This 177-nucleotide RNA was probed chemically with 2A3 and DMS. The RNA was probed in 150 mM KOAc, 10 mM MgCl2 and 150 mM bicine (pH 8.5) at 24 C. 2A3 adducts were read by reverse transcription with SuperScript II with manganese. It was measured as part of the RMDB library OK2TRN. For 2A3, 4,155 sequencing reads were counted. DMS adducts were read by reverse transcription with MarathonRT.
RNA sequence: GGGAACGACUCGAGUAGAGUCGAAAACAGAUGAAGUGCUUAACAUCUCUCUAUUUCAGAGCACCAUCUUGUGUCCCAAGGAUCCAGUAAACUGGACCUCUGACCAGAAAAGAUGUACCAUGGCAUGGGAUAGUUAACACUUCGGUGUUAACUAUCCAAAAGAAACAACAACAACAAC
Reactivity to 2A3 in 0.01 (KOAc 150mM, MgCl2 10mM, bicine 150mM(pH8.5), 24C), signal-to-noise 4, nucleotides 027 to 126: c020a000g010a020u020g050a300a070g000u000g000c020u090u090a100a070c080a200u060c070u000c030u000c040u200a250u110u190u170c080a040g000a000g040c000a000c000c000a000u000c000u050u120g020u000g020u000c030c000c000a000a010g050g000a120u000c000c000a000g010u200a040a120a300c010u010g000g020a010c010c010u010c040u050g080a080c030c000a000g090a050a100a020a000g050a040u040g000u030a020c000c050a040u030g050g000c030a030u070g110
Reactivity to DMS in 0.01 (KOAc 150mM, MgCl2 10mM, bicine 150mM(pH8.5), 24C), signal-to-noise 4, nucleotides 027 to 126: c040a040g000a020u000g000a200a110g040u000g000c020u000u010a060a170c160a050u010c040u000c130u000c180u000a110u000u000u020c160a100g000a020g010c020a020c030c020a020u000c000u000u010g010u000g010u000c000c010c010a100a070g000g000a100u000c010c000a020g000u010a100a220a120c030u000g010g010a050c030c020u000c080u000g000a080c070c060a090g000a120a130a110a100g000a030u000g000u000a070c050c030a080u000g010g010c060a140u010g010